[RMDB]
RNA sequence: GGGAACGACUCGAGUAGAGUCGAAAAGACCUCGUUCGCGAGGUCCUUCAUCCUAAGUCGACACAACAGCGACCCAUGAGCAAUGAUGCGUCGGAAACGACGUUGAGCUCAGGGUCGACAUGUGUCGAUAUGGACCGCACGGACAUUCGUGUCCGAACGUCUUACUCCUUUUCGAAGGAGUAAGACGAAAAGAAACAACAACAACAAC
Reactivity to DMS in 0.01 (KOAc 150mM, MgCl2 10mM, bicine 150mM(pH8.5), 24C), signal-to-noise 1, nucleotides 027 to 156: g000a060c000c010u010c030g010u000u010c300g100c010g020a020g000g040u000c000c000u000u000c160a090u010c020c000u000a080a300g030u000c000g000a040c050a060c010a090a150c140a230g010c010g020a060c000c010c010a170u000g010a010g040c000a190a100u000g010a010u010g010c000g080u000c000g010g000a170a130a250c000g010a000c000g000u000u000g020a030g010c000u010c000a090g010g000g000u000c000g020a010c010a300u000g010u000g040u000c000g010a010u000a040u000g000g010a060c090c010g040c110a130c060g000g030a040c020a060u000u000c280g010u000g040u000c000c000g010a050a150
Reactivity to 2A3 in 0.01 (KOAc 150mM, MgCl2 10mM, bicine 150mM(pH8.5), 24C), signal-to-noise 5, nucleotides 027 to 156: g010a000c010c000u010c010g010u050u050c190g010c040g190a030g000g000u010c020c000u070u070c010a110u020c010c000u030a180a070g020u000c000g000a000c000a000c000a040a140c060a130g050c000g000a000c000c000c050a300u050g000a000g000c010a070a300u150g020a040u070g070c000g000u000c000g030g050a090a110a070c020g000a000c000g010u010u010g020a010g000c000u000c000a010g000g000g000u000c000g000a060c000a010u000g000u000g000u000c000g000a000u000a000u010g010g000a040c040c040g100c110a110c040g000g010a010c010a040u060u090c240g090u070g000u040c000c000g000a050a030